Chemical mapping of a 207-nucleotide RNA with 2A3 and DMS. The reactions ran in a buffer of 150 mM KOAc, 10 mM MgCl2 and 150 mM bicine (pH 8.5), at 24 C. In probing experiments dimethyl sulfate is read out at A N1 and C N3, which are open when not base-paired.

[RMDB]
RNA sequence: GGGAACGACUCGAGUAGAGUCGAAAACUGCUGGAUGGUAACAGAUCUUUCGGACACGGGCCUAAUCCGCAGCCAAGCUCCGUAGCGCAUUUUUGUUAGUGCGUCGGAGAAGGUUCACAGACUGUAAGGGAAGGGGUUCGCACUUGUGUGCGGGCUUACAUAAACCGUACUUCGGUACGGUUUAUGUAAAAGAAACAACAACAACAAC
Reactivity to 2A3 in 0.01 (KOAc 150mM, MgCl2 10mM, bicine 150mM(pH8.5), 24C), signal-to-noise 3, nucleotides 027 to 156: c030u030g000c040u060g020g010a030u030g000g050u070a100a050c020a100g030a250u050c040u080u150u080c100g020g000a020c030a040c130g020g020g000c010c010u060a080a060u040c030c030g040c020a010g020c000c040a070a060g030c010u000c000c000g070u090a040g050c020g000c010a020u040u030u020u080u210g220u160u130a020g000u000g030c020g040u030c000g000g000a000g010a010a020g010g000u070u060c030a020c000a060g090a060c030u030g020u080a080a000g010g000g050a020a060g000g020g000g000u040u000c000g020c010a040c040u150u210g040u040g000u000g270c040g000g020g000c000u000u020
Reactivity to DMS in 0.01 (KOAc 150mM, MgCl2 10mM, bicine 150mM(pH8.5), 24C), signal-to-noise 1, nucleotides 027 to 156: c030u000g030c000u000g030g020a120u000g000g040u000a100a150c030a090g000a050u000c040u000u000u000c080g010g000a090c040a090c110g000g000g040c060c020u000a090a130u000c020c040g010c030a050g030c000c010a070a180g020c010u000c000c010g080u010a110g020c000g010c010a020u000u000u010u010u010g040u000u010a030g070u000g010c000g030u000c030g000g010a040g040a040a120g040g000u000u010c100a110c050a110g020a060c050u000g030u030a070a090g030g030g000a030a100g010g010g010g020u000u010c020g060c000a020c050u000u000g030u000g030u010g020c000g020g010g010c080u000u010